[RMDB]
RNA sequence: GGGAACGACUCGAGUAGAGUCGAAAAAUACUAGUGCGGGUUAUAACCACGAUGUGUCUAUACUUCGUGCAUGGAUUCGUACCACCAAAAUAGUUGGUGAUCACCCGCUGGUAAUAGAGAGGGUCCGCACAAGCUCCAGAUUCGUCUGGAGCUUGUGAAAAGAAACAACAACAACAAC
Reactivity to DMS in 0.01 (KOAc 150mM, MgCl2 10mM, bicine 150mM(pH8.5), 24C), signal-to-noise 1, nucleotides 027 to 126: a050u010a050c010u000a120g030u000g000c030g000g010g010u020u010a050u000a080a170c300c040a020c000g010a000u020g000u000g000u040c260u040a090u010a080c010u000u000c020g020u000g010c110a190u010g040g040a100u000u010c160g010u000a050c000c040a020c020c060a010a040a130a140u010a190g010u010u010g010g000u000g000a080u000c040a020c000c000c030g000c000u030g010g000u000a050a060u040a220g010a160g010a080g000g040g000u000c010c070g010